[RMDB]
RNA sequence: GGGAACGACUCGAGUAGAGUCGAAAAGACCAACACCACAGCAGCCGCCGGGUUCCUGGUCCUCCAAGAUAUCAGCUGCCUCCGGUAUCAUUGGAACCCUAGUUCGUCACCGUCUGCGCCCAUUAGGCGAUCUUCUUAUGUUCGCAUAAGAAGAUCGAAAAGAAACAACAACAACAAC
Reactivity to DMS in 0.01 (KOAc 150mM, MgCl2 10mM, bicine 150mM(pH8.5), 24C), signal-to-noise 7, nucleotides 027 to 126: g020a160c040c020a090a130c120a070c040c030a070c090a100g000c060a100g000c020c040g010c070c090g000g000g010u000u000c030c020u000g010g010u000c060c070u000c020c020a060a060g000a060u000a020u000c040a090g000c060u000g010c040c020u010c060c050g010g010u000a020u010c040a110u000u010g000g000a050a080c040c030c030u000a080g000u000u000c040g010u000c030a060c050c030g010u000c030u000g010c090g010c010c000c020a120u010u000a100g000g010
Reactivity to 2A3 in 0.01 (KOAc 150mM, MgCl2 10mM, bicine 150mM(pH8.5), 24C), signal-to-noise 4, nucleotides 027 to 126: g050a020c000c000a010a030c030a040c050c020a040c030a050g050c010a000g020c000c060g040c020c060g060g000g010u040u040c020c000u030g030g020u010c010c010u010c020c000a040a020g040a050u110a030u090c050a010g060c030u090g060c010c020u050c030c000g040g030u060a060u080c060a160u020u070g050g000a030a040c000c000c000u030a060g040u040u060c040g050u050c040a010c070c020g010u010c040u050g020c020g010c010c000c000a060u100u110a070g080g030
An RNA of 177 nucleotides, treated with DMS and 2A3 and read out base by base. The data come from the RNA Mapping Database (RMDB), library OK2TRN. The RNA was probed in 150 mM KOAc, 10 mM MgCl2 and 150 mM bicine (pH 8.5) at 24 C. High DMS reactivity at an A or C suggests that its Watson-Crick edge is free.